[RMDB]
The record gives the reactivity of an RNA of 177 nucleotides to 2A3 and DMS. DMS adducts were read by reverse transcription with MarathonRT. Conditions: 150 mM KOAc, 10 mM MgCl2 and 150 mM bicine (pH 8.5), 24 C. The 2A3 profile rests on 6,810 reads. The data come from the RNA Mapping Database (RMDB), library OK1LIB.
RNA sequence: GGGAACGACUCGAGUAGAGUCGAAAACUACCUUGAACUAUGCGGUUUCGGUUGCGGAGGCCUGCGAGCGCGCGGACGCCGUGUUGGUGCUUACCGAAUGGCGGGAGUUCAUCGAUCUCGAACCCGCUACAGGGAUCAUAUUCGUAUGAUCCCUGUAAAAAGAAACAACAACAACAAC
Reactivity to 2A3 in 0.01 (KOAc 150mM, MgCl2 10mM, bicine 150mM(pH8.5), 24C), signal-to-noise 7, nucleotides 027 to 126: c070u160a130c000c020u050u090g070a050a030c040u070a120u210g040c040g080g000u010u040u060c020g040g030u050u110g050c020g030g030a020g060g060c000c030u050g020c020g030a120g040c030g000c020g020c080g080g010a040c030g000c020c010g030u040g070u080u080g040g020u120g040c040u040u100a090c020c010g040a090a050u100g070g000c020g020g010g010a070g030u030u030c010a020u040c060g060a060u030c050u020c130g050a070a070c000c000c010g000c010
Reactivity to DMS in 0.01 (KOAc 150mM, MgCl2 10mM, bicine 150mM(pH8.5), 24C), signal-to-noise 6, nucleotides 027 to 126: c060u010a070c070c040u010u010g010a070a080c090u030a070u030g010c130g000g010u000u000u010c050g000g020u010u010g010c070g000g000a080g000g000c030c010u010g020c050g010a100g020c090g020c040g020c070g010g000a150c060g020c010c040g010u020g020u020u010g000g020u000g010c090u010u020a080c040c030g010a110a050u020g010g010c000g000g010g010a090g010u010u020c060a090u000c040g000a100u020c110u020c030g000a070a170c020c000c000g020c070